Structure probing data (2A3) for a 207-nucleotide construct. For 2A3 the reverse transcriptase was SuperScript II with manganese.
RNA sequence: GGGAACGACUCGAGUAGAGUCGAAAAGAAGGCGUGGAGAAGGCAGGAUCGCCAAGGGAACAUGCCUGGGUUCCCGAGGUUAAACCCUUACAGGCUCGCUGAUGACGGGUACGCCCCUCUUUCCCGUCGUUGGUCAGACUUAAACAGGGGCUAAGCAGUAUCCUGAGAUCUUCGGAUCUCAGGAUACAAAAGAAACAACAACAACAAC
Reactivity to 2A3 in 0.01 (KOAc 150mM, MgCl2 10mM, bicine 150mM(pH8.5), 24C), signal-to-noise 1, nucleotides 027 to 156: g040a040a030g070g010c070g050u110g030g020a050g020a070a060g060g060c080a010g000g000a030u060c020g000c000c000a000a000g020g000g000a000a000c000a000u070g020c070c020u000g000g010g010u010u000c000c020c000g000a010g000g010u040u150a050a130a090c080c020c000u080u120a050c000a010g000g000c000u010c000g000c000u060g010a010u020g000a010c000g030g020g000u040a020c070g000c000c010c040c020u010c100u090u230u120c010c000c000g000u010c010g000u000u000g010g000u010c010a000g010a140c060u190u300a030a030a010c030a010g000g000g000g000c000u030a050a010g030c050a020